[RMDB]
RNA sequence: GGGAACGACUCGAGUAGAGUCGAAAAGUGUGGGAUAGACGGGACUAGUCUUGGCCGUCGUCUUCCAAGACGAUGCUAAAGGAGUCGUGGUGCAUACGGUGGUUCCAUGGAGGAACGGUACGCCGUGCGAGGCUUAAUGAUUCGUCAUUAAGCCUCGAAAAGAAACAACAACAACAAC
Reactivity to 2A3 in 0.01 (KOAc 150mM, MgCl2 10mM, bicine 150mM(pH8.5), 24C), signal-to-noise 3, nucleotides 027 to 126: g060u050g000u050g010g020g000a020u040a090g040a020c010g000g000g030a040c010u030a020g050u040c000u010u020g010g020c010c010g030u000c000g000u000c000u060u000c020c000a000a000g010a000c000g000a000u020g000c020u040a030a050a050g060g010a020g000u030c030g030u000g010g030u070g020c020a030u030a070c010g000g020u020g020g000u020u000c000c000a010u120g200g060a140g040g020a040a010c000g000g050u080a030c030g000c000c000g000u000g020
Reactivity to DMS in 0.01 (KOAc 150mM, MgCl2 10mM, bicine 150mM(pH8.5), 24C), signal-to-noise 7, nucleotides 027 to 126: g010u010g020u000g010g000g000a090u000a060g010a040c040g000g000g000a060c040u000a090g010u000c100u000u000g000g010c050c050g020u000c010g010u000c010u000u010c110c140a050a010g000a030c010g000a030u000g000c010u010a020a050a050g000g000a030g000u000c020g000u000g010g020u010g020c090a120u010a020c030g000g010u000g000g000u000u000c010c010a180u020g020g020a240g010g010a030a020c020g000g000u010a210c110g010c000c000g010u000g010
The record gives the reactivity of an RNA of 177 nucleotides to 2A3 and DMS. Source: RMDB library OK2TRN, as collected in RNAgym.